[RMDB]
RNA sequence: GGGAACGACUCGAGUAGAGUCGAAAAACGAAACCCAAGGUGCAUGCCGAGGUGCGGUAGGCCUCGUUAACAAACCGAAAAAAAAUAGUCGCAAACGACGAAAACUACGCACUCGCAGCUUAAUAACAGUAGGGUCCCUACUUCGGUAGGGACCCAAUCAUUUUUCUUAGUUCGCUAAGAAAAAUGAAAAAGAAACAACAACAACAAC
Reactivity to DMS in 0.01 (KOAc 150mM, MgCl2 10mM, bicine 150mM(pH8.5), 24C), signal-to-noise 2, nucleotides 027 to 156: a220c050g000a090a040a150c000c000c000a080a300g010g000u000g020c020a060u000g040c110c040g000a120g030g010u000g050c000g030g060u010a030g020g000c030c030u000c000g060u020u010a120a170c120a060a070a090c060c010g020a010a000a000a060a070a100a100a300u000a080g010u000c020g010c100a110a070a050c010g000a020c010g010a020a030a030a080c010u000a050c020g010c020a020c010u000c010g000c040a070g030c020u000u000a060a110u000a070a090c050a120g030u000a110g020g040g040u000c000c000c010u000a040c000u000u000c190g060g000u000a010g010g020g010a000c000c030c000a010a010
Reactivity to 2A3 in 0.01 (KOAc 150mM, MgCl2 10mM, bicine 150mM(pH8.5), 24C), signal-to-noise 2, nucleotides 027 to 156: a000c050g030a110a000a030c010c000c020a040a070g110g010u050g010c120a110u100g040c170c070g010a040g000g130u050g030c050g110g020u020a020g010g030c010c030u000c020g010u010u090a090a030c070a140a050a050c060c020g040a060a010a010a000a000a000a010a040u220a030g050u020c020g000c060a060a100a080c060g020a000c000g030a040a020a020a020c020u010a000c000g020c000a000c010u030c000g030c020a040g010c000u120u120a120a060u130a260a050c040a070g110u180a120g060g000g000u000c000c000c000u000a010c000u040u100c120g070g010u000a000g000g000g020a000c000c000c000a000a000